The record gives the reactivity of an RNA of 177 nucleotides to 2A3 and DMS. DMS adducts were read by reverse transcription with MarathonRT. For 2A3, 2,763 sequencing reads were counted. The DMS profile rests on 1,664 reads. The RNA was probed in 150 mM KOAc, 10 mM MgCl2 and 150 mM bicine (pH 8.5) at 24 C. It was measured as part of the RMDB library OK1LIB.
[RMDB]
RNA sequence: GGGAACGACUCGAGUAGAGUCGAAAAAUCGAUGAGGCGUUACAUCUAGUCUCAACUCCAAUCAGGGUGCAGAGAUCUCAGAUAUCCAGUGUGUCAGACAAUCCGCCAUCACUAGAGAACUCAACAACCCAUUGGGAGGAUUCGUCCUCCCAAUGGGAAAAGAAACAACAACAACAAC
Reactivity to 2A3 in 0.01 (KOAc 150mM, MgCl2 10mM, bicine 150mM(pH8.5), 24C), signal-to-noise 4, nucleotides 027 to 126: a000u100c040g000a030u060g000a000g000g040c030g080u110u100a070c080a100u060c060u070a010g070u020c000u020c010a000a070c020u040c030c030a020a080u070c030a090g060g030g040u070g040c110a020g040a020g040a160u040c080u030c060a060g030a030u070a050u070c060c030a030g020u000g000u000g030u260c040a030g020a070c010a050a070u060c030c030g020c040c050a030u030c000a010c060u070a010g010a010g010a110a080c050u010c080a000a040c010a050a090
Reactivity to DMS in 0.01 (KOAc 150mM, MgCl2 10mM, bicine 150mM(pH8.5), 24C), signal-to-noise 2, nucleotides 027 to 126: a130u000c110g000a020u000g000a050g000g000c040g020u010u000a100c040a060u000c020u000a100g010u000c000u000c000a030a090c130u020c020c060a020a000u090c220a100g000g050g040u010g020c140a060g000a010g010a080u000c070u020c090a080g030a220u000a050u010c080c100a020g020u020g000u000g000u010c020a080g010a070c210a150a110u000c070c030g060c010c030a060u030c060a020c010u040a070g000a010g000a000a110c060u000c050a010a110c190a060a150